An RNA of 177 nucleotides, treated with DMS and 2A3 and read out base by base. For DMS the reverse transcriptase was MarathonRT. The RNA was probed in 150 mM KOAc, 10 mM MgCl2 and 150 mM bicine (pH 8.5) at 24 C. The data come from the RNA Mapping Database (RMDB), library TTRDEL.

RNA sequence: GGGAACGACUCGAGUAGAGUCGAAAAGAUAUGGAACUAUGUGCUAGCGGACUCGGAAACGAGUCGCUUGGACCACAUGAGUUCCUAAGUCAAAAGAACCGUACGAGCUUCGGCUCGUACGGUUCAACAGUAAGAUUGACUUCGGUCAAUCUUACUGAAAAGAAACAACAACAACAAC
Reactivity to DMS in 0.01 (KOAc 150mM, MgCl2 10mM, bicine 150mM(pH8.5), 24C), signal-to-noise 3, nucleotides 027 to 126: g000a050u010a300u000g000g000a020a010c000u000a030u000g010u000g000c030u000a020g000c010g040g020a040c000u000c000g000g000a060a100a150c000g000a000g010u000c010g000c000u010u010g010g000a160c300c010a000c000a010u000g010a020g020u000u000c000c000u000a020a100g010u000c040a080a090a160a130g000a020a000c000c010g000u010a000c000g000a000g030c010u000u000c200g030g010c000u000c000g000u000a000c000g000g000u000u000c000a020a070
Reactivity to 2A3 in 0.01 (KOAc 150mM, MgCl2 10mM, bicine 150mM(pH8.5), 24C), signal-to-noise 2, nucleotides 027 to 126: g020a020u070a060u150g010g000a010a010c000u000a010u020g010u020g030c020u030a020g000c080g140g120a150c000u010c010g000g020a080a040a000c010g010a010g010u010c010g010c000u020u120g070g090a060c090c040a000c000a040u150g270a020g020u000u000c000c000u020a070a010g080u050c020a050a010a000a300g010a000a020c040c000g000u010a000c000g000a000g000c020u080u300c300g060g000c000u000c000g000u010a000c000g040g010u000u010c000a000a000